[RMDB]
RNA sequence: GGGAACGACUCGAGUAGAGUCGAAAACGAACUGCUAUUGCACACGUGUGGCUCACACAGUGACUAGGACACACUUUCCUCAAAUUAUUGGAAACAGCCCGUUUCCUAAGACAAGUGUAAAUUUGUUCCAGGAUAAUAAGGCAAAAGACUGAGUAUCCUUCCUUCUAAACUUCGGUUUAGAAGGAAGAAAAGAAACAACAACAACAAC
Reactivity to 2A3 in 0.01 (KOAc 150mM, MgCl2 10mM, bicine 150mM(pH8.5), 24C), signal-to-noise 6, nucleotides 027 to 156: c040g040a030a030c060u070g020c050u090a080u130u240g010c040a020c000a030c100g030u040g020u040g110g090c060u070c070a030c000a010c010a070g030u030g050a040c030u040a040g020g030a010c010a000c000a000c000u040u050u030c010c020u110c040a070a120a160u240u190a110u130u140g020g010a020a010a010c010a040g080c020c020c010g000u000u010u000c000c000u030a080a000g000a030c040a040a010g010u010g020u110a100a130a090u050u050u040g030u060u030c020c010a010g050g020a020u040a170a030u080a080a060g040g000c020a020a010a050a020g060a050c040u100g020a040g090u110a060u120c020
Reactivity to DMS in 0.01 (KOAc 150mM, MgCl2 10mM, bicine 150mM(pH8.5), 24C), signal-to-noise 2, nucleotides 027 to 156: c040g000a080a140c100u000g020c020u000a000u000u000g030c000a100c070a050c110g000u020g050u000g020g010c000u020c060a140c070a070c070a100g040u000g010a130c060u000a060g030g030a050c020a070c030a070c050u010u000u010c010c020u000c060a090a070a210u030u000a150u010u020g010g010a060a060a110c060a160g020c000c040c030g010u000u000u010c020c020u000a050a040g010a020c000a000a030g020u000g000u000a060a080a060u000u000u000g020u000u000c030c050a030g030g010a070u010a020a070u000a030a040g030g030c030a060a040a060a070g010a140c020u000g000a100g000u000a230u000c060
Conditions: 150 mM KOAc, 10 mM MgCl2 and 150 mM bicine (pH 8.5), 24 C. An RNA of 207 nucleotides, treated with 2A3 and DMS and read out base by base. For 2A3 the reverse transcriptase was SuperScript II with manganese. Reactivities are given for positions 27 through 156.